[RMDB]
RNA sequence: GGGAACGACUCGAGUAGAGUCGAAAACAGAAUACAUGAUGAUCUCAAUCCAACUUGAACUCUCUCACUGAUUACUUGAUGACAAUAAAAUAUCUGAUAUUCUGAAAGUGAGAACUUCGGUUCUCACGAUAAGGUCAUCCUUCGGGAUGACCUUAUCAAAAGAAACAACAACAACAAC
Reactivity to DMS in 0.01 (KOAc 150mM, MgCl2 10mM, bicine 150mM(pH8.5), 24C), signal-to-noise 2, nucleotides 027 to 126: c060a040g000a030a050u010a010c050a010u000g000a040u000g020a120u000c040u010c030a050a060u000c110c060a040a130c070u000u000g010a080a140c070u000c050u000c050u050c040a090c040u010g020a130u000u000a050c130u020u000g000a090u000g020a050c100a070a070u000a070a090a140a150u000a080u000c010u010g000a140u000a020u000u000c000u000g000a090a060a160g020u000g000a000g000a000a010c000u010u000c130g020g010u000u000c000u000c010a000c010
Reactivity to 2A3 in 0.01 (KOAc 150mM, MgCl2 10mM, bicine 150mM(pH8.5), 24C), signal-to-noise 3, nucleotides 027 to 126: c010a000g040a050a010u050a050c040a040u150g030a030u030g050a060u020c000u020c040a030a060u000c040c040a020a030c040u020u040g030a050a030c020u040c000u020c010u000c080a060c070u070g020a130u060u120a070c030u080u060g050a040u140g040a070c040a070a000u150a180a220a030a020u120a020u050c020u030g050a100u040a040u120u040c010u020g080a120a040a050g010u010g000a000g000a000a000c000u050u020c120g080g000u000u000c000u000c000a000c000